[RMDB]
RNA sequence: GGGAACGACUCGAGUAGAGUCGAAAAUCGUUUUGAAGAUAUGCCACCGACUUAUAGAGCAGAGAGGCACCUAUGAGUUGAGUUCAGGACUACGGUUUUUGACUGCGGAUACUUCCUGGACUCGUAGCAGGACGAUUACUUUCGAGUAAUCGUCCUGAAAAGAAACAACAACAACAAC
Reactivity to DMS in 0.01 (KOAc 150mM, MgCl2 10mM, bicine 150mM(pH8.5), 24C), signal-to-noise 3, nucleotides 027 to 126: u000c060g000u000u000u000u040g000a150a120g000a070u030a030u000g020c040c050a200c090c070g000a060c040u010u010a040u000a050g030a150g030c030a080g000a140g020a100g030g010c020a050c140c030u000a010u000g010a030g010u000u000g000a020g000u000u000c000a010g000g000a080c240u010a230c050g000g000u000u000u020u010u020g000a010c020u010g000c060g010g000a060u000a080c250u040u010c000c000u000g000g000a000c010u000c020g000u020a030g010
Reactivity to 2A3 in 0.01 (KOAc 150mM, MgCl2 10mM, bicine 150mM(pH8.5), 24C), signal-to-noise 5, nucleotides 027 to 126: u040c020g010u000u040u040u200g180a120a040g030a120u090a050u150g040c010c000a030c030c030g030a010c020u050u050a040u060a070g050a020g010c050a010g090a040g010a080g180g100c030a090c020c000u030a030u050g040a010g040u070u060g020a000g010u000u030c020a010g010g010a010c030u080a060c100g010g050u020u000u010u080u240g110a040c030u100g030c010g020g030a030u050a160c030u040u010c020c000u010g050g000a020c000u000c010g010u020a020g020
Chemical mapping of a 177-nucleotide RNA with DMS and 2A3. The data come from the RNA Mapping Database (RMDB), libraries RFM100 and RFMREP. DMS adducts were read by reverse transcription with MarathonRT. Values cover nucleotides 27 to 126. 2A3 adducts were read by reverse transcription with SuperScript II with manganese.